This 177-nucleotide RNA was probed chemically with DMS and 2A3. The RNA was probed in 150 mM KOAc, 10 mM MgCl2 and 150 mM bicine (pH 8.5) at 24 C. 2A3 adducts were read by reverse transcription with SuperScript II with manganese.
RNA sequence: GGGAACGACUCGAGUAGAGUCGAAAAGAUAUGGACAAGCGAGGGUAUUAGAUACGAAUAAGACUCGUGCAUCGGAAACGAUGCCGAGUCGCUGAACUAAUACCUACCCACCGCUUGUCCUAAGUCACCUGAAAGUAAUCUUCGGAUUACUUUCAGGAAAAGAAACAACAACAACAAC
Reactivity to DMS in 0.01 (KOAc 150mM, MgCl2 10mM, bicine 150mM(pH8.5), 24C), signal-to-noise 2, nucleotides 027 to 126: g010a040u000a170u010g000g020a030c000a010a010g020c010g000a060g040g000g010u000a010u020u000a010g020a120u010a160c270g000a140a120u000a100a250g000a040c000u000c000g000u000g030c000a010u000c000g000g000a020a020a100c000g030a020u000g000c000c000g000a010g000u000c000g020c180u010g010a100a120c000u000a010a000u000a000c030c030u010a000c020c030c050a300c150c000g010c000u000u000g000u000c010c000u000a000a040g000u000c030a300
Reactivity to 2A3 in 0.01 (KOAc 150mM, MgCl2 10mM, bicine 150mM(pH8.5), 24C), signal-to-noise 2, nucleotides 027 to 126: g000a010u090a050u130g040g000a030c010a000a000g040c000g000a000g000g000g040u010a010u010u030a010g100a150u300a300c120g050a200a160u300a300a020g010a000c010u010c030g200u300g040c000a000u000c000g030g010a090a000a040c010g000a010u000g000c010c000g000a010g000u030c000g000c020u040g010a040a040c010u010a000a010u020a000c000c000u000a020c030c000c010a020c010c020g000c010u010u000g000u010c000c000u000a030a000g020u000c020a040